[RMDB]
Structure probing data (2A3 and DMS) for a 177-nucleotide construct.
RNA sequence: GGGAACGACUCGAGUAGAGUCGAAAAGAUAUGGAGAUACGAAGCGAAGAACUAUACUGAAUGUCGGAAACGACGCGUAUAGGGAGCUUCGAAUCUCCUAAGUCAAACGCCAAGUUCGCUUGGCGAACAAUAUGUAGCUCUUCGGAGCUACAUAUUGAAAAGAAACAACAACAACAAC
Reactivity to 2A3 in 0.01 (KOAc 150mM, MgCl2 10mM, bicine 150mM(pH8.5), 24C), signal-to-noise 8, nucleotides 027 to 126: g000a000u000a000u040g000g010a010g000a000u030a040c010g000a000a000g000c020g210a300a010g000a030a010c000u010a000u010a020c040u110g190a300a290u300g000u010c000g000g000a000a010a000c000g010a000c030g010c040g070u010a000u000a010g000g000g000a010g000c010u000u010c000g000a000a000u010c000u010c000c000u000a000a000g000u000c020a100a060a080c030g000c000c010a000a010g030u040u090c250g020c220u000u010g010g000c010g000a040a010
Reactivity to DMS in 0.01 (KOAc 150mM, MgCl2 10mM, bicine 150mM(pH8.5), 24C), signal-to-noise 7, nucleotides 027 to 126: g010a010u000a030u010g000g010a010g010a010u000a080c010g020a010a010g020c000g000a080a160g010a130a190c000u000a010u000a000c000u010g020a160a100u020g010u000c000g010g010a010a010a030c000g010a000c010g010c220g000u000a010u000a000g000g000g000a020g020c000u000u000c000g010a050a010u000c000u000c000c000u000a000a040g000u000c000a070a100a210c030g010c000c010a020a010g010u000u010c250g020c000u000u000g000g010c000g000a050a110
The data come from the RNA Mapping Database (RMDB), library TTRDEL.
The DMS profile rests on 14,836 reads.